[RMDB]
RNA sequence: GGGAACGACUCGAGUAGAGUCGAAAAUCCUAAGUCUUCCUCAGCUGGGCCGAGCGACACUACCCACCCUAUUCGGAAACGAAUAGGAGGUGUCGUAUCCCAGCGAGGAAGAUAUGGAAAAGUAUGACCUACCAAGUUCGCUUGGUAGGUCAUACAACAGUUAAAAUACGUUCGCGUAUUUUAACUGAAAAGAAACAACAACAACAAC
Reactivity to DMS in 0.01 (KOAc 150mM, MgCl2 10mM, bicine 150mM(pH8.5), 24C), signal-to-noise 3, nucleotides 027 to 156: u010c000c000u000a060a190g010u000c000u000u000c000c020u000c020a160g090c020u000g010g030g060c210c080g010a300g030c030g000a040c000a050c000u000a040c020c020c040a300c200c000c000u000a000u000u010c000g030g010a300a100a230c030g020a020a010u000a010g020g010a050g030g030u000g010u000c010g020u000a100u010c010c010c010a050g020c020g040a010g000g000a010a020g020a030u000a040u000g010g000a090a070a160a170g010u000a010u000g020a030c000c000u000a000c000c000a010a000g010u000u000c300g040c030u020u000g020g020u010a000g010g000u020c000a000u000a000c000a070a190
Reactivity to 2A3 in 0.01 (KOAc 150mM, MgCl2 10mM, bicine 150mM(pH8.5), 24C), signal-to-noise 5, nucleotides 027 to 156: u030c010c000u040a140a010g020u000c000u010u000c000c000u010c020a060g000c010u010g000g020g000c060c120g130a090g080c010g010a010c000a000c010u100a090c040c060c050a060c020c010c000u000a000u000u010c000g040g030a080a080a070c010g000a000a000u000a000g010g000a010g000g000u000g000u000c000g000u010a050u060c000c000c000a000g000c000g010a000g000g000a000a000g000a000u000a010u010g020g020a050a050a040a050g010u020a000u020g000a000c000c000u010a000c000c000a010a000g010u030u100c190g120c180u000u000g000g000u000a000g000g000u000c000a000u000a000c000a000a000

An RNA of 207 nucleotides, treated with DMS and 2A3 and read out base by base. It was measured as part of the RMDB library RNAMAK. For DMS the reverse transcriptase was MarathonRT. 2A3 adducts were read by reverse transcription with SuperScript II with manganese. Values are in units of 0.01, from 0 to 300, in steps of 10.